[RMDB]
RNA sequence: GGGAACGACUCGAGUAGAGUCGAAAAGAAAAGAAGUGCCGGUCACCGCUCAACUGCCCCUACAUUUGGACUCUAAUAACCUAAUGUCUCUUCUGUUCGGUUCCACCCUGAAACUGGUCGAAGGUAAACUAGAGACCUCCCAACCUGCCUUGACUGGUACUCCCAAUGUAUUCGUACAUUGGGAGUAAAAAGAAACAACAACAACAAC
Reactivity to DMS in 0.01 (KOAc 150mM, MgCl2 10mM, bicine 150mM(pH8.5), 24C), signal-to-noise 2, nucleotides 027 to 156: g010a130a080a090a090g000a120a100g030u000g020c030c060g000g010u020c020a050c120c040g000c030u000c030a050a100c050u000g010c050c030c010c030u000a070c030a100u000u000u000g010g020a090c070u000c060u010a080a120u010a060a100c050c040u000a060a110u000g010u000c030u010c020u000u010c050u000g000u000u000c030g040g030u000u000c030c030a080c010c040c030u020g000a090a050a070c050u000g010g010u000c030g020a100a050g020g020u000a070a050a060c030u010a090g010a270g000a070c030c020u000c020c020c030a000a120c050c010u000g020c000c000u010u000g000a040c040u000g000g030
Reactivity to 2A3 in 0.01 (KOAc 150mM, MgCl2 10mM, bicine 150mM(pH8.5), 24C), signal-to-noise 2, nucleotides 027 to 156: g020a000a080a000a020g030a150a000g010u030g060c040c040g000g030u050c030a050c070c100g010c010u060c080a070a280c120u170g000c050c020c010c050u030a030c010a070u000u010u160g010g000a030c020u000c010u130a060a180u110a120a100c020c070u040a080a010u080g040u010c020u000c000u210u090c080u090g090u050u070c020g010g000u070u000c000c000a040c030c020c010u040g030a050a010a130c020u050g020g000u030c020g080a040a010g040g000u070a070a100a030c040u050a060g020a010g000a190c000c020u030c000c020c000a050a060c000c030u010g020c000c000u070u110g020a060c060u020g010g010

Source: RMDB library OK3TST, as collected in RNAgym. An RNA of 207 nucleotides, treated with DMS and 2A3 and read out base by base. DMS adducts were read by reverse transcription with MarathonRT. The DMS profile rests on 4,852 reads. Values are in units of 0.01, from 0 to 300, in steps of 10.